Structure probing data (2A3 and DMS) for a 177-nucleotide construct. It was measured as part of the RMDB library TTRDES. Conditions: 150 mM KOAc, 10 mM MgCl2 and 150 mM bicine (pH 8.5), 24 C. High DMS reactivity at an A or C suggests that its Watson-Crick edge is free. Values are in units of 0.01, from 0 to 300, in steps of 10.
RNA sequence: GGGAACGACUCGAGUAGAGUCGAAAAGAUAUGGAUCGUUGUGGUGCCAGCUUCGGUUCGGAAACGAACCCGAGCGGUAAUUCCACACGAUCCUAAGUCAAAAGUGACUCUCUUCGGAGAGUCACAAGACUAUACAAACCUUCGGGUUUGUAUAGUCAAAAGAAACAACAACAACAAC
Reactivity to 2A3 in 0.01 (KOAc 150mM, MgCl2 10mM, bicine 150mM(pH8.5), 24C), signal-to-noise 4, nucleotides 027 to 126: g020a010u060a030u130g000g000a010u010c030g050u260u300g000u020g000g030u060g120c160c150a130g010c110u030u030c000g000g000u000u010c010g020g000a060a060a030c010g000a010a010c000c020c010g000a000g000c010g000g020u060a070a060u200u060c010c000a000c000a010c000g000a000u000c000c000u010a010a010g040u010c040a040a050a070a120g010u010g010a000c000u040c000u000c000u070u140c300g080g000a000g000a010g000u000c000a000c000a000a000
Reactivity to DMS in 0.01 (KOAc 150mM, MgCl2 10mM, bicine 150mM(pH8.5), 24C), signal-to-noise 5, nucleotides 027 to 126: g000a040u010a300u010g000g000a010u000c000g000u000u020g050u000g000g020u010g010c100c070a170g030c010u010u000c300g000g000u000u010c000g010g020a050a070a150c000g000a020a000c000c000c040g000a010g020c000g000g010u010a030a130u020u000c000c010a010c020a020c000g000a010u000c000c010u000a000a080g000u010c030a070a110a080a130g020u000g010a010c010u000c000u000c000u000u020c250g010g000a020g010a030g010u000c000a000c010a020a100